An RNA of 207 nucleotides, treated with 2A3 and DMS and read out base by base. Values cover nucleotides 27 to 156. The RNA was probed in 150 mM KOAc, 10 mM MgCl2 and 150 mM bicine (pH 8.5) at 24 C. The DMS profile rests on 5,693 reads. Source: RMDB library OK3TST, as collected in RNAgym.

[RMDB]
RNA sequence: GGGAACGACUCGAGUAGAGUCGAAAAUUGUGUCUCACUUUUAUACCUCCGUUUCUCGGGCUACCUAGUAUCCAGCGUCUUCUGCUGUCGUGGUUUCGUCGAGUGCAUUGAACCUCUGGUUCUUCUAGCGGUACGCGGGUGUGUGGAAGUAGCAUCGCUAUUAUCUCACCUUCGGGUGAGAUAAUAGAAAAGAAACAACAACAACAAC
Reactivity to 2A3 in 0.01 (KOAc 150mM, MgCl2 10mM, bicine 150mM(pH8.5), 24C), signal-to-noise 6, nucleotides 027 to 156: u100u070g050u020g080u060c020u050c030a050c020u050u030u020u060a070u050a060c010c010u050c040c030g010u020u100u010c030u010c010g030g010g000c000u010a010c000c000u030a110g050u120a140u080c060c010a010g010c010g100u060c140u290u060c100u190g020c000u020g020u030c030g030u040g040g050u030u060u030c100g080u020c010g060a030g050u080g040c050a060u050u120g020a010a020c000c020u150c130u230g040g000u040u030c000u040u050c050u080a030g000c020g050g020u030a040c060g010c020g030g000g000u020g000u000g010u020g030g020a050a050g000u020a010g020c030a060u090c050g020
Reactivity to DMS in 0.01 (KOAc 150mM, MgCl2 10mM, bicine 150mM(pH8.5), 24C), signal-to-noise 2, nucleotides 027 to 156: u010u000g000u010g010u010c030u000c040a090c060u000u000u000u000a090u000a070c020c030u000c050c040g030u000u000u000c010u000c030g040g010g010c010u000a040c060c020u000a140g020u020a190u010c080c020a050g020c100g030u010c100u000u010c050u000g020c000u010g010u000c040g010u010g010g020u000u000u000c040g020u000c010g040a100g040u000g030c050a150u000u010g000a050a040c040c020u000c090u000g040g020u000u000c040u010u010c060u000a150g000c050g000g020u000a060c040g000c070g010g040g040u000g020u000g040u010g020g020a060a020g010u000a090g020c040a120u010c060g000